[RMDB]
RNA sequence: GGGAACGACUCGAGUAGAGUCGAAAAGAAUCGCAGUUCGCUGCGAUUCAAAUAAAAUCAGCGGUAUGGAGGCGUAAAAUAUUACCGCUGAACGCCUCCUUAAAACUACGUCCUUCGGGACGUAGAAUCGUUGUGAUAACUUCGGUUAUCACAACGAAAAAGAAACAACAACAACAAC
Reactivity to 2A3 in 0.01 (KOAc 150mM, MgCl2 10mM, bicine 150mM(pH8.5), 24C), signal-to-noise 1, nucleotides 027 to 126: g010a000a000u000c000g000c000a000g010u040u030c070g030c140u000g000c010g000a000u000u010c000a000a010a000u040a000a020a000a040u060c000a000g020c020g020g040u100a090u110g070g020a000g060g020c040g010u040a000a150a200a020u210a040u110u130a070c030c010g010c020u000g000a000a000c010g000c000c010u000c000c000u050u130a100a110a000a000c000u000a000c030g000u020c000c000u020u110c230g040g000g000a010c010g020u000a000g000a000a040
Reactivity to DMS in 0.01 (KOAc 150mM, MgCl2 10mM, bicine 150mM(pH8.5), 24C), signal-to-noise 1, nucleotides 027 to 126: g000a020a010u000c000g010c010a030g010u000u010c180g020c030u040g010c000g000a010u000u000c000a000a040a050u010a040a030a110a110u010c050a060g040c010g010g010u000a040u000g010g010a050g010g060c040g040u010a080a050a090a050u000a120u000u030a070c040c000g000c020u000g000a010a040c050g010c040c010u030c000c080u000u010a020a050a120a230c020u000a000c000g010u000c000c000u000u030c190g000g000g000a010c000g010u000a000g020a040a080
Chemical mapping of a 177-nucleotide RNA with 2A3 and DMS. High 2A3 reactivity points to a flexible backbone, as in loops and unpaired stretches. Conditions: 150 mM KOAc, 10 mM MgCl2 and 150 mM bicine (pH 8.5), 24 C. It was measured as part of the RMDB library M2PK50.